Chemical mapping of a 207-nucleotide RNA with 2A3 and DMS. Conditions: 150 mM KOAc, 10 mM MgCl2 and 150 mM bicine (pH 8.5), 24 C. The 2A3 profile rests on 1,161 reads. For DMS the reverse transcriptase was MarathonRT. DMS (dimethyl sulfate) methylates the pairing face of unpaired adenines and cytosines. The data come from the RNA Mapping Database (RMDB), library OK3TST. Reactivities are given for positions 27 through 156.

RNA sequence: GGGAACGACUCGAGUAGAGUCGAAAAUAAUGCGAUCAAAAUUAACGCUGCCAACAUCGUAGCCGGUGAGCUCGAUGCCAAUAUUAUUCACGUUAUCCACCUGGAUGUUUCCAGUCUGACCGGCGAUAUUACUUCGUUUAUUAAAUCUAAUUGGGCACCCUACCUUUUAUUUCGAUAAAAGGUAGGGAAAAGAAACAACAACAACAAC
Reactivity to 2A3 in 0.01 (KOAc 150mM, MgCl2 10mM, bicine 150mM(pH8.5), 24C), signal-to-noise 2, nucleotides 027 to 156: u150a020a050u120g000c010g050a040u090c120a090a050a100a090u160u070a170a040c020g010c070u070g020c080c010a050a030c020a070u080c040g080u080a020g000c020c020g060g050u100g060a020g010c000u000c040g000a010u010g070c030c000a070a060u080a080u170u130a090u100u110c040a010c070g040u060u070a030u060c050c020a050c030c050u050g010g000a020u050g130u020u150u000c000c000a000g060u020c030u040g100a030c000c020g030g000c030g010a000u010a040u060u090a050c050u030u060c020g070u100u040u040a080u040u110a060a080a080u040c070u120a050a100u050u030g000g040g000c010a060
Reactivity to DMS in 0.01 (KOAc 150mM, MgCl2 10mM, bicine 150mM(pH8.5), 24C), signal-to-noise 1, nucleotides 027 to 156: u010a050a000u000g050c030g060a070u000c070a090a120a080a160u010u000a050a060c150g060c030u000g040c040c020a080a060c050a000u000c000g000u000a070g000c010c000g000g020u010g040a250g100c080u000c030g000a050u000g000c000c040a060a130u000a080u020u000a060u020u000c080a030c070g000u000u020a030u000c050c040a100c070c050u010g030g010a150u000g020u010u000u000c010c010a050g000u000c050u000g030a030c050c020g000g010c000g000a080u000a060u000u010a040c160u000u000c050g000u000u000u020a120u060u010a030a070a130u000c050u020a030a110u000u000g020g000g020c030a290